[RMDB]
RNA sequence: GGGAACGACUCGAGUAGAGUCGAAAACCCAGGUCGGACCGCGAGGAGGUGGAGAUGCCAUGCCGACCCGAAGAGGAAGAAGAGGACAUGGACGCGAACCGUGAGUGGAACCCUCGAUCCUUUAUUGCUAAUUGAGGUUGUUCGCAACCUCAAUUAGAAAAGAAACAACAACAACAAC
Reactivity to DMS in 0.01 (KOAc 150mM, MgCl2 10mM, bicine 150mM(pH8.5), 24C), signal-to-noise 2, nucleotides 027 to 126: c030c000c010a090g000g030u010c000g000g010a200c060c070g020c110g000a140g030g020a060g050g030u000g000g010a200g020a060u000g010c070c020a070u010g000c070c040g010a050c080c000c050g010a050a070g010a100g000g000a030a100g010a140a160g010a080g020g000a080c040a060u010g000g030a120c060g000c090g000a060a060c030c020g020u010g000a140g020u000g020g010a080a130c070c020c000u010c010g000a170u000c030c010u010u000u000a110u030u000g010
Reactivity to 2A3 in 0.01 (KOAc 150mM, MgCl2 10mM, bicine 150mM(pH8.5), 24C), signal-to-noise 1, nucleotides 027 to 126: c000c000c000a010g040g010u050c000g020g030a060c020c030g010c040g030a070g090g010a040g040g070u090g000g040a130g000a100u160g000c020c010a000u090g030c000c000g020a030c000c000c000g060a040a000g020a060g110g010a040a060g050a060a000g040a050g000g020a050c020a020u020g060g000a010c030g020c040g060a020a020c000c000g030u020g020a050g020u140g000g040a030a030c010c000c000u000c000g060a080u070c030c010u050u130u040a200u090u130g060